[RMDB]
RNA sequence: GGGAACGACUCGAGUAGAGUCGAAAAGACCAAACCAUGACGCACGUGCCCAUGUUGGGUCAGGCAGACGACGGAACCUCAGCCCUUGGAAUGGAGGCAAUACGACUAUUCGAUCCACUAUUCGUGGGUAGGUCUUCGCUUUCGAGCGAAGACCUACAAAAGAAACAACAACAACAAC
Reactivity to 2A3 in 0.01 (KOAc 150mM, MgCl2 10mM, bicine 150mM(pH8.5), 24C), signal-to-noise 1, nucleotides 027 to 126: g030a030c000c000a050a000a000c060c100a160u110g010a040c000g020c100a030c080g090u140g000c040c000c000a000u030g160u150u220g000g000g000u000c000a000g000g080c050a000g040a020c000g000a000c050g000g040a160a170c000c090u110c000a000g000c000c000c000u000u000g070g200a000a000u030g160g000a120g000g060c000a040a040u040a000c000g000a070c020u150a300u010u030c000g070a030u010c040c000a050c120u160a040u200u160c020g000u000g000g000